Conditions: 150 mM KOAc, 10 mM MgCl2 and 150 mM bicine (pH 8.5), 24 C. The record gives the reactivity of an RNA of 207 nucleotides to 2A3. For 2A3 the reverse transcriptase was SuperScript II with manganese. For 2A3, 628 sequencing reads were counted.
RNA sequence: GGGAACGACUCGAGUAGAGUCGAAAAGACAAGGUGGAUCUCCGGAUGGUCAAGCGGUAAAAUCCUACUGUUCCUGGCAGGAAUAUGGAAGCGAGAGCCGAGCAAGGCUGCUAACCUCUUGGUCGCUAUGACAGACUCGACUGACGACGAAUCAGUAGUUUUUCCAUCUCUUCGGAGAUGGAAAAACAAAAGAAACAACAACAACAAC
Reactivity to 2A3 in 0.01 (KOAc 150mM, MgCl2 10mM, bicine 150mM(pH8.5), 24C), signal-to-noise 1, nucleotides 027 to 156: g040a010c040a030a100g040g000u000g080g000a120u040c040u010c060c090g040g040a160u050g020g080u000c030a010a000g030c010g070g000u050a030a040a020a130u030c060c010u030a100c010u050g100u110u020c000c000u030g090g000c090a100g040g060a030a000u060a080u140g040g000a010a030g040c080g020a130g030a000g070c030c010g000a000g020c040a060a060g060g000c010u070g030c050u050a140a080c000c000u020c020u040u040g000g020u020c000g010c020u100a070u080g020a040c030a040g120a030c000u040c130g060a020c010u030g000a030c100g020a020c040g050a110a010u030c000a050g030u080a040